[RMDB]
RNA sequence: GGGAACGACUCGAGUAGAGUCGAAAAAUAAAGACCGAUCUCCAAUUCGAAUUUCCCCAAGGGUAUUUUGGAAAGAUCGAAAGCAGGUCUGGGCUCUCCUGGAAAAAGGGAAUCGAAACUGGCGCUGGACAGGAAGACAGUUCGCUGUCUUCCUGUCAAAAGAAACAACAACAACAAC
Reactivity to 2A3 in 0.01 (KOAc 150mM, MgCl2 10mM, bicine 150mM(pH8.5), 24C), signal-to-noise 2, nucleotides 027 to 126: a000u120a030a080a020g050a090c010c000g000a020u030c010u040c040c000a020a090u020u100c040g030a050a160u060u060u070c030c040c010c000a030a100g120g020g000u240a180u010u110u040u090g050g000a090a090a020g010a050u050c010g020a130a040a000g070c080a030g010g030u000c020u080g010g010g010c000u000c000u000c070c010u010g000g080a070a020a000a020a010g060g000g010a060a060u040c060g050a010a040a090c040u030g020g000c060g000c030u030g070
Reactivity to DMS in 0.01 (KOAc 150mM, MgCl2 10mM, bicine 150mM(pH8.5), 24C), signal-to-noise 2, nucleotides 027 to 126: a110u080a070a070a150g010a130c080c010g000a080u000c020u000c010c050a040a100u000u000c060g000a070a190u010u020u010c010c000c030c110a070a100g000g010g030u040a070u030u020u000u010g000g030a010a060a000g000a040u000c020g040a100a060a120g010c140a100g000g020u010c020u000g000g000g030c060u030c050u030c000c000u000g000g000a000a040a060a140a100g000g000g000a100a040u010c030g020a040a110a090c040u000g000g000c080g020c110u010g030